[RMDB]
RNA sequence: GGGAACGACUCGAGUAGAGUCGAAAAGAUAUGGACUAUAGCCAACAGCCAUCAAGUCGGAAACGACUUAUGGACAUGGCUACGUCCUAAGUCAAAAGGCACUCGCAUGUUCGCAUGCGAGUGCCAAGUUACUCUUCAACUUCGGUUGAAGAGUAACAAAAGAAACAACAACAACAAC
Reactivity to DMS in 0.01 (KOAc 150mM, MgCl2 10mM, bicine 150mM(pH8.5), 24C), signal-to-noise 2, nucleotides 027 to 126: g010a030u000a230u010g010g010a030c000u020a300u000a010g010c000c000a050a200c260a160g000c020c000a000u000c250a000a000g010u010c000g000g000a010a060a090c000g000a030c000u000u000a000u000g000g010a070c130a160u000g000g000c000u000a000c300g000u000c000c000u010a030a110g000u000c020a070a060a040a110g030g040c000a040c000u000c000g030c010a000u020g030u010u040c280g030c030a010u000g000c000g030a000g030u000g000c000c000a000a000
Reactivity to 2A3 in 0.01 (KOAc 150mM, MgCl2 10mM, bicine 150mM(pH8.5), 24C), signal-to-noise 2, nucleotides 027 to 126: g020a010u020a000u050g010g000a010c000u030a020u120a270g000c010c010a140a080c170a300g110c020c000a020u060c190a070a000g000u000c020g040g000a020a010a000c010g010a010c010u000u010a010u000g000g090a150c100a230u010g040g000c010u000a010c030g000u020c000c000u010a050a010g030u020c020a000a020a130a190g030g000c000a000c000u000c000g090c010a030u010g030u110u160c300g030c220a020u030g000c000g000a000g000u000g000c000c000a000a000